[RMDB]
RNA sequence: GGGAACGACUCGAGUAGAGUCGAAAAGCAGACGCAGUGUGUGAGGACACUGAAUCUCGUGGGUAGUCAUCUUCCUCACAAGAUGUCUGAGCUUCUGACGAGAGUCAGGAGCUCAAUACCGUCGUACGAGAGUAUGACAGACACGAGCGUCUGAGGACACUACAAAGUUCUUCGGAACUUUGUAGUGAAAAGAAACAACAACAACAAC
Reactivity to DMS in 0.01 (KOAc 150mM, MgCl2 10mM, bicine 150mM(pH8.5), 24C), signal-to-noise 3, nucleotides 027 to 156: g010c010a010g010a040c020g040c010a100g020u000g010u010g010u050g010a150g000g000a190c040a050c030u000g010a050a090u000c010u000c020g040u000g020g000g030u000a080g010u000c030a050u000c030u000u000c030c030u010c080a060c060a090a080g000a020u000g020u000c080u010g010a020g010c010u000u000c000u000g010a020c030g030a300g010a300g010u000c000a000g020g010a000g010c010u000c000a010a060u010a050c060c020g030u010c020g070u000a030c000g010a300g000a280g030u000a020u000g010a050c020a100g010a170c040a000c020g010a100g000c000g020u000c000u000g010a070g020g010a210
Reactivity to 2A3 in 0.01 (KOAc 150mM, MgCl2 10mM, bicine 150mM(pH8.5), 24C), signal-to-noise 5, nucleotides 027 to 156: g080c000a000g010a000c010g010c040a000g000u010g000u010g010u020g040a020g010g030a010c000a000c020u050g040a090a170u120c020u000c020g020u020g020g020g030u050a060g030u010c000a010u010c010u080u030c010c010u020c010a010c010a010a010g010a010u020g020u050c070u050g000a000g000c000u000u010c000u010g000a010c000g020a010g010a010g140u000c000a000g000g000a000g000c000u000c000a000a000u020a000c010c010g010u010c010g010u010a010c020g020a010g000a010g140u040a010u020g020a020c040a050g140a060c020a000c020g000a010g000c010g000u000c000u000g000a030g030g040a010